An RNA of 207 nucleotides, treated with DMS and 2A3 and read out base by base. DMS adducts were read by reverse transcription with MarathonRT. As a SHAPE reagent, 2A3 marks flexible, mostly unpaired nucleotides at the ribose 2'-OH. The RNA was probed in 150 mM KOAc, 10 mM MgCl2 and 150 mM bicine (pH 8.5) at 24 C.
RNA sequence: GGGAACGACUCGAGUAGAGUCGAAAAAGUCAGAGGGCGCUACCAUGCAAACUAGGGCUUGCUACUCUUGCACAGAAUCACAUCUCGAUAAUUGUCAGUGCAAGAAGGACAAUUAUACCAUUUAAUGAAAACGUUUACCUGUUCGCAGGUAAACGAACCUUCUUAAAAUGUUCGCAUUUUAAGAAGGAAAAGAAACAACAACAACAAC
Reactivity to DMS in 0.01 (KOAc 150mM, MgCl2 10mM, bicine 150mM(pH8.5), 24C), signal-to-noise 3, nucleotides 027 to 156: a090g020u000c080a090g020a090g000g010g020c180g010c060u000a080c090c070a200u000g040c060a070a110a090c050u000a070g020g020g000c030u000u010g030c040u000a230c050u000c060u000u000g000c000a050c010a110g000a100a170u000c100a080c120a090u000c060u000c070g000a070u000a020a030u000u010g010u010c010a300g010u000g000c030a080a070g010a060a130g050g000a050c030a040a100u000u000a030u010a130c100c030a100u010u010u000a080a150u000g010a120a060a080a100c000g010u010u000u000a000c000c000u000g010u000u000c300g010c000a010g010g050u000a000a000a030c000g010a010a030
Reactivity to 2A3 in 0.01 (KOAc 150mM, MgCl2 10mM, bicine 150mM(pH8.5), 24C), signal-to-noise 9, nucleotides 027 to 156: a000g010u020c010a010g010a020g050g020g000c010g000c020u090a250c110c070a090u240g000c010a010a020a040c010u020a020g020g000g000c010u030u020g010c020u120a150c000u000c000u000u010g000c000a010c000a010g120a120a120u170c050a060c020a210u070c070u070c100g070a030u010a020a010u030u010g010u020c010a000g000u010g010c000a010a000g000a010a010g020g000a000c000a010a000u030u020a020u030a100c050c040a140u130u140u260a170a150u210g070a040a040a010a020c010g000u000u000u000a000c000c000u010g010u030u050c140g020c070a000g000g000u010a000a000a000c000g000a000a020